Chemical mapping of a 207-nucleotide RNA with DMS and 2A3. For DMS the reverse transcriptase was MarathonRT. 2A3 adducts were read by reverse transcription with SuperScript II with manganese. For 2A3, 3,326 sequencing reads were counted. The RNA was probed in 150 mM KOAc, 10 mM MgCl2 and 150 mM bicine (pH 8.5) at 24 C.

[RMDB]
RNA sequence: GGGAACGACUCGAGUAGAGUCGAAAAUACCGUCUUCUCCACGACGGUUUCAAUCCAUAGCUUCACGUUGUGUAGCGUAGGUGGAAGGUAUCGUGUGGUGUAUAAACACCACAUAGUCUCUUAGGGGUCAAGCUGAUAAACUUCGGUUUAUCAGCAAUAAUAGAUAAACUUUCGAGUUUAUCUAUUAAAAAGAAACAACAACAACAAC
Reactivity to DMS in 0.01 (KOAc 150mM, MgCl2 10mM, bicine 150mM(pH8.5), 24C), signal-to-noise 3, nucleotides 027 to 156: u000a050c000c010g010u000c010u000u000c050u000c110c070a100c060g020a020c030g020g000u000u000u000c070a070a140u000c020c040a160u000a150g020c020u000u000c030a040c020g050u000u000g020u000g010u000a040g020c050g040u000a070g030g050u000g000g030a060a090g020g020u000a040u000c070g030u000g030u000g010g060u010g020u000a120u000a110a160a130c000a010c020c000a010c000a010u010a040g010u000c020u000c020u000u000a130g020g010g020g010u010c060a090a150g010c000u000g010a020u000a000a000a020c010u000u000c300g050g020u000u000u000a010u000c000a020g010c000a000a010
Reactivity to 2A3 in 0.01 (KOAc 150mM, MgCl2 10mM, bicine 150mM(pH8.5), 24C), signal-to-noise 4, nucleotides 027 to 156: u110a010c020c000g010u010c010u150u070c040u030c030c000a030c060g000a000c010g000g000u000u050u060c010a010a040u030c000c000a030u060a090g020c000u040u050c010a020c050g300u240u190g010u060g020u060a010g010c030g070u080a070g070g020u030g010g020a050a030g090g010u120a030u170c070g010u020g000u000g030g000u000g060u030a100u110a300a230a030c010a000c000c000a010c000a000u010a000g030u000c010u000c010u080u130a040g000g010g010g030u080c070a060a020g000c000u000g000a000u000a000a000a010c010u020u050c130g030g000u000u000u000a010u000c000a000g000c000a000a000